This 207-nucleotide RNA was probed chemically with 2A3. It was measured as part of the RMDB library M2RFPK. 2A3 adducts were read by reverse transcription with SuperScript II with manganese.

[RMDB]
RNA sequence: GGGAACGACUCGAGUAGAGUCGAAAAAGUCAGUGGUCCGACUUACGAGUCGGACCAGUGACAUGGCAGCUGGAUCCAGCCAGGCGGUGUAUCGCCAAACCCAGCCAAUCAAUCUACCCACCGGGAAUACAGAAAGCGAACUUCGGUUCGCUUUCAACCGUAAUAUGGUCUUCGGACCAUAUUACGGAAAAGAAACAACAACAACAAC
Reactivity to 2A3 in 0.01 (KOAc 150mM, MgCl2 10mM, bicine 150mM(pH8.5), 24C), signal-to-noise 1, nucleotides 027 to 156: a000g020u010c020a040g170u040g030g000u020c040c000g010a010c010u060u100a090c300g080a000g000u000c000g010g030a000c030c030a000g000u010g000a000c000a030u010g000g000c010a000g000c010u000g000g010a080u120c040c030a020g020c000c000a020g030g000c010g020g010u140g120u280a140u260c010g000c000c000a020a020a020c000c000c000a000g060c030c000a020a090u150c050a010a060u080c030u140a120c000c020c090a150c140c060g010g000g010a070a030u120a140c030a040g040a000a040a000g000c000g010a000a000c000u060u060c020g040g000u010u000c000g000c000u000u000u000c000a000a000